[RMDB]
RNA sequence: GGGAACGACUCGAGUAGAGUCGAAAAUUCUGGGCUGUAGUGCGCUAUGCCGAUCGGGUGUCCGCACUAAGUUCGGCAUCAAUAUGGUGACCUCCCGGGAGCGGGGGACCACCAGGUUGCCUAAGGAGGUACUGAAAAUUUUCGAAUUUUCAGUACCAAAAGAAACAACAACAACAAC
Reactivity to 2A3 in 0.01 (KOAc 150mM, MgCl2 10mM, bicine 150mM(pH8.5), 24C), signal-to-noise 9, nucleotides 027 to 126: u050u000c010u020g000g020g000c010u020g070u300a010g000u020g010c020g000c100u080a030u090g000c010c020g300a300u230c140g110g000g000u020g010u000c010c010g000c000a000c000u000a020a000g010u010u010c010g000g000c010a010u020c010a020a160u070a090u160g000g000u010g000a060c000c000u060c010c020c000g020g080g040a140g130c070g010g010g000g010g020a050c100c000a000c000c000a000g010g010u010u010g010c000c010u040a080a020g120g050a070
Reactivity to DMS in 0.01 (KOAc 150mM, MgCl2 10mM, bicine 150mM(pH8.5), 24C), signal-to-noise 7, nucleotides 027 to 126: u000u000c010u000g000g000g000c000u000g010u000a010g010u000g010c030g020c150u010a030u010g010c000c000g000a150u020c210g010g010g030u000g010u020c300c050g020c010a010c010u000a040a040g000u000u000c000g010g000c090a010u000c050a060a090u010a100u000g000g010u010g000a100c020c000u000c000c000c000g010g000g040a100g000c030g000g000g000g000g000a020c030c000a010c000c000a000g000g030u000u000g000c010c000u000a070a100g010g010a210